[RMDB]
RNA sequence: GGGAACGACUCGAGUAGAGUCGAAAAUCCGAAGGUUCGCCUUCGGAAAAAAGAUAUGGAAAGAGUGAGAGCGAUAAGAUUUGCUUCGGAAACGAAGCAACGAUCUUUUGACGCUCCCUCUUUCCUAAGUCAAAAAACGACUGGUUCGCCAGUCGAAAGGCAUAAUAAGGUUCGCCUUAUUAUGCCUAAAAGAAACAACAACAACAAC
Reactivity to DMS in 0.01 (KOAc 150mM, MgCl2 10mM, bicine 150mM(pH8.5), 24C), signal-to-noise 1, nucleotides 027 to 156: u000c000c000g000a070a000g010g020u020u000c120g010c010c000u000u010c000g010g010a000a010a000a110a060a110g000a060u010a160u010g010g010a020a020a010g010a050g040u010g000a140g000a030g000c000g010a120u010a060a030g000a070u000u000u000g040c010u010u000c000g020g010a150a100a110c000g010a020a010g010c000a010a000c220g010a030u000c010u000u000u000u000g010a190c060g020c010u000c000c010c020u020c010u000u000u000c000c000u000a000a070g060u010c020a010a060a070a100a120a200c010g030a020c030u000g010g010u000u010c300g040c030c000a000g010u000c010g000a000a080
Reactivity to 2A3 in 0.01 (KOAc 150mM, MgCl2 10mM, bicine 150mM(pH8.5), 24C), signal-to-noise 2, nucleotides 027 to 156: u010c010c000g000a000a020g030g000u060u130c180g140c040c050u010u040c070g000g000a020a020a000a010a000a020g010a000u010a000u040g000g010a010a010a000g010a000g030u090g040a300g020a020g200c080g080a130u160a300a010g000a000u040u000u000g000c000u000u000c000g000g000a010a030a020c010g000a000a000g000c000a000a010c030g020a000u010c010u070u110u080u170g200a120c080g000c000u000c000c000c000u000c000u000u000u000c000c000u000a000a000g000u000c020a030a030a060a160a020a040c000g010a000c000u000g010g040u080u100c220g030c070c000a000g010u000c000g000a090a050
This 207-nucleotide RNA was probed chemically with DMS and 2A3. The reactions ran in a buffer of 150 mM KOAc, 10 mM MgCl2 and 150 mM bicine (pH 8.5), at 24 C. DMS adducts were read by reverse transcription with MarathonRT. It was measured as part of the RMDB library RNAMAK.